Source: RMDB library OK3TST, as collected in RNAgym. Chemical mapping of a 207-nucleotide RNA with 2A3 and DMS. The 2A3 profile rests on 562 reads. For DMS, 2,892 sequencing reads were counted.
RNA sequence: GGGAACGACUCGAGUAGAGUCGAAAAGUACUUCUCACUCAGCUUGGUCACCGGUUCCAGGUUUGUGUCUUGGGCAAGUCCCCCAUAGCUGGUGACAGACCAGAAAAAUGAAAACAACUUUGACUUAGCCCUCAAGUUUUCAGUGAAUGAGAAUGAACCUAAGGCAAGAAUUCGUUCUUGCCUUAGGAAAAGAAACAACAACAACAAC
Reactivity to 2A3 in 0.01 (KOAc 150mM, MgCl2 10mM, bicine 150mM(pH8.5), 24C), signal-to-noise 1, nucleotides 027 to 156: g030u000a070c000u070u050c000u000c030a010c000u020c000a010g060c060u020u070g000g000u080c000a010c300c210g130g000u080u080c040c010a070g060g020u020u070u030g060u020g020u000c060u120u140g000g050g000c080a210a020g170u120c000c000c000c000c000a040u020a020g020c000u000g000g000u020g040a050c070a000g060a020c000c060a000g020a010a190a050a000a000u040g010a010a000a070a000c020a010a050c030u000u060u150g020a020c010u040u100a010g000c010c010c000u090c000a030a030g050u080u000u000u000c000a000g100u000g170a020a000u020g000a000g000a050a040u140g000a020a010
Reactivity to DMS in 0.01 (KOAc 150mM, MgCl2 10mM, bicine 150mM(pH8.5), 24C), signal-to-noise 2, nucleotides 027 to 156: g000u010a100c080u000u010c020u000c000a070c020u010c020a100g030c020u000u010g010g010u010c040a150c070c040g020g000u000u000c040c020a100g000g030u010u000u000g050u010g030u000c010u010u020g000g000g030c020a060a100g010u000c010c000c000c020c030a060u060a100g030c010u000g000g040u000g010a150c140a130g000a090c000c050a110g000a020a080a070a110a150u010g000a010a050a050a080c040a090a070c050u000u000u000g020a080c060u000u020a180g010c040c010c040u010c090a010a300g020u000u010u000u010c020a090g050u000g000a050a070u000g030a070g010a050a040u010g000a110a120
The RNA was probed in 150 mM KOAc, 10 mM MgCl2 and 150 mM bicine (pH 8.5) at 24 C.